[RMDB]
RNA sequence: GGGAACGACUCGAGUAGAGUCGAAAAGCUGUCUUGAAGCAUGCAGUAAGGCUUUUUGUCUUUGCACUUACCUUAUAUGACUUAUUUGGGGCAGUCAAUUUAGGGGUCUGUACUUUUACAGUAAUCACAUGCACCCAGUAUUCGUACUGGGUGCAUGAAAAGAAACAACAACAACAAC
Reactivity to 2A3 in 0.01 (KOAc 150mM, MgCl2 10mM, bicine 150mM(pH8.5), 24C), signal-to-noise 5, nucleotides 027 to 126: g020c010u010g010u040c020u070u100g020a040a010g060c060a070u150g000c000a030g030u060a040a030g060g030c030u090u060u020u130u080g060u040c090u100u150u250g020c080a000c030u010u070a040c010c000u050u000a050u030a100u140g130a140c020u090u050a040u100u040u060g020g000g000g000c000a010g010u080c040a040a060u040u130u190a050g040g040g000g060u000c000u010g050u010a050c100u060u080u160u140a020c000a030g010u070a050a050u070c050a040
Reactivity to DMS in 0.01 (KOAc 150mM, MgCl2 10mM, bicine 150mM(pH8.5), 24C), signal-to-noise 3, nucleotides 027 to 126: g030c020u000g010u000c020u040u010g010a030a050g000c200a090u010g010c080a010g020u020a010a010g000g010c290u060u000u010u000u020g010u000c030u020u020u050g000c100a050c040u000u000a050c020c010u000u000a010u040a020u010g030a100c010u020u030a060u000u000u000g010g010g000g020c060a010g010u010c050a020a090u000u050u080a100g000g050g010g030u020c020u000g000u040a020c190u010u000u030u000a030c040a010g000u030a060a100u020c040a120